[RMDB]
RNA sequence: GGGAACGACUCGAGUAGAGUCGAAAAGACCAGGGCAAAACGCCGGGAUUUAGGGCCCCGGGAUGGGCCACUAGGGCCAGCCUGGGAAGGGACAUCUUAAGGGACGGGCAUUGGGACGGGAAGGGCCGUUAGUUGCCUUAUUCGUAAGGCAACUAACAAAAGAAACAACAACAACAAC
Reactivity to DMS in 0.01 (KOAc 150mM, MgCl2 10mM, bicine 150mM(pH8.5), 24C), signal-to-noise 1, nucleotides 027 to 126: g000a200c060c000a080g040g020g050c050a060a060a120a090c180g030c000c050g000g000g000a110u000u000u000a150g000g050g010c170c000c010c000g070g040g020a030u000g030g010g010c000c000a050c230u010a140g030g010g040c000c000a030g000c010c010u000g070g000g020a120a100g000g020g010a130c120a120u060c050u050u050a120a090g010g000g000a180c110g000g000g090c160a130u000u010g000g000g000a100c130g010g000g000a080a130g020g000g000c150c130
Reactivity to 2A3 in 0.01 (KOAc 150mM, MgCl2 10mM, bicine 150mM(pH8.5), 24C), signal-to-noise 1, nucleotides 027 to 126: g030a010c030c030a020g030g010g000c030a140a270a050a000c040g030c080c000g000g000g000a100u120u180u140a050g040g000g070c130c050c020c040g020g050g040a040u130g050g020g090c050c030a070c190u180a070g020g070g020c000c020a030g000c020c000u000g010g030g040a080a050g020g000g010a010c010a030u070c060u120u130a050a050g060g000g120a070c060g000g000g060c030a040u010u250g020g020g090a060c020g070g030g000a010a070g000g030g020c030c030
An RNA of 177 nucleotides, treated with DMS and 2A3 and read out base by base. Conditions: 150 mM KOAc, 10 mM MgCl2 and 150 mM bicine (pH 8.5), 24 C. For 2A3 the reverse transcriptase was SuperScript II with manganese. DMS adducts were read by reverse transcription with MarathonRT. Source: RMDB library OK2TRN, as collected in RNAgym.